[RMDB]
RNA sequence: GGGAACGACUCGAGUAGAGUCGAAAAGUACCGCGUGUGUGGUGAGGGGACGAAACCUCAUGCUACCGCCGCGGUGUGAAGCGUAGGUGACGAUACGCUGAGGCUGCGGAGGUCAGCACCUGCAUAGGCCGCUUGGUUGGUUCGCCAGCUAAGCGGCAAAAGAAACAACAACAACAAC
Reactivity to DMS in 0.01 (KOAc 150mM, MgCl2 10mM, bicine 150mM(pH8.5), 24C), signal-to-noise 6, nucleotides 027 to 126: g000u010a100c020c010g030c100g010u010g010u010g010u010g000g020u020g020a040g000g020g000g010a140c220g010a100a100a120c020c010u000c020a120u010g020c010u000a030c000c030g000c020c010g010c000g000g000u000g000u020g000a190a030g000c000g010u000a000g000g010u000g020a080c220g000a070u000a010c010g000c010u000g000a230g000g000c000u000g000c010g000g000a040g000g000u010c130a020g010c000a230c100c020u000g000c050a040u010a070g000
Reactivity to 2A3 in 0.01 (KOAc 150mM, MgCl2 10mM, bicine 150mM(pH8.5), 24C), signal-to-noise 7, nucleotides 027 to 126: g030u020a030c000c000g010c020g010u050g000u000g010u040g020g040u080g030a040g010g000g000g020a040c070g060a090a050a030c020c000u000c000a010u050g000c000u010a010c000c010g000c000c000g000c000g000g000u040g130u090g090a030a000g000c010g000u000a010g000g100u080g100a060c060g040a050u010a020c000g000c000u010g010a030g220g000c010u000g000c010g010g010a020g010g020u060c130a000g000c000a020c000c010u020g000c010a040u040a090g150

The record gives the reactivity of an RNA of 177 nucleotides to DMS and 2A3. Source: RMDB library OK1LIB, as collected in RNAgym. For DMS, 21,722 sequencing reads were counted. Reactivities are given for positions 27 through 126.